[RMDB]
RNA sequence: GGGAACGACUCGAGUAGAGUCGAAAAAUACGGUGACUGAAGAGGGCGCUGCCGUGGAGCUGUUCGAGGACCUCAUCUCGCACGUGCGACGCGAGCUCUCUGCCCGUCUCCUGAAGCUGCGGGUCGACCACAGGAGAAUAUUCGUAUUCUCCUGUGGAAAAGAAACAACAACAACAAC
Reactivity to 2A3 in 0.01 (KOAc 150mM, MgCl2 10mM, bicine 150mM(pH8.5), 24C), signal-to-noise 6, nucleotides 027 to 126: a000u150a020c030g020g020u050g090a140c040u070g050a090a040g010a030g040g060g000c030g020c090u130g050c050c000g000u010g010g030a020g000c040u040g040u110u090c040g020a060g030g090a130c020c080u100c060a100u060c020u000c010g060c010a010c040g100u120g010c010g040a040c030g020c000g010a050g030c000u000c000u000c000u010g010c010c010c000g010u010c030u020c010c010u040g050a070a020g030c060u090g040c030g040g000g020u040c020g010a060
Reactivity to DMS in 0.01 (KOAc 150mM, MgCl2 10mM, bicine 150mM(pH8.5), 24C), signal-to-noise 8, nucleotides 027 to 126: a100u010a050c070g010g010u000g010a160c030u000g010a160a030g000a050g000g000g010c010g010c070u000g030c080c010g030u000g000g010a130g010c100u000g000u000u000c050g010a070g000g000a130c170c130u010c130a060u010c010u000c000g020c050a030c020g000u000g030c010g010a070c050g010c010g000a090g000c020u000c020u000c010u000g000c040c030c040g000u000c110u000c010c020u000g010a080a130g010c060u000g020c040g000g000g010u010c040g010a250

Chemical mapping of a 177-nucleotide RNA with 2A3 and DMS.
DMS adducts were read by reverse transcription with MarathonRT.
The data come from the RNA Mapping Database (RMDB), library OK2TRN.
For DMS, 15,613 sequencing reads were counted.
Reactivities are rounded to 0.1 and cut off at 0 and 3.